Overview: Structure probing data (2A3) for a 207-nucleotide construct. The reactions ran in a buffer of 150 mM KOAc, 10 mM MgCl2 and 150 mM bicine (pH 8.5), at 24 C. 2A3 adducts were read by reverse transcription with SuperScript II with manganese. The 2A3 profile rests on 571 reads. Source: RMDB library OK3TST, as collected in RNAgym.

[RMDB]
RNA sequence: GGGAACGACUCGAGUAGAGUCGAAAAGGUGGUCCGGUAAACCCACCGGAGCGCAUCGAGGACGUGCUGGCCGCUCAGGCGGACGAUGGGAGGGUGGAGAGGCGCAGGAUCUUUCCAUUUAGUUACAUAGCAGAGUACGAGCGCACCCACGGCAUCAGAUCGGAAUCAUUUUCGAAUGAUUCCGAUCAAAAGAAACAACAACAACAAC
Reactivity to 2A3 in 0.01 (KOAc 150mM, MgCl2 10mM, bicine 150mM(pH8.5), 24C), signal-to-noise 1, nucleotides 027 to 156: g110g000u040g020g000u020c060c000g040g030u110a060a060a120c000c000c000a020c030c060g020g000a020g030c060g000c020a120u050c090g030a040g000g100a030c000g010u070g030c010u040g010g010c010c030g000c060u070c070a060g110g100c000g010g030a080c060g020a070u020g060g000g030a020g070g000g030u110g020g050a130g000a040g060g000c080g030c120a050g050g030a020u040c000u060u050u000c000c040a030u010u020u100a060g060u030u030a020c060a150u230a070g070c030a030g000a010g180u120a000c030g010a000g010c000g000c020a080c010c020c020a060c000g030g000c010a060u110c040a010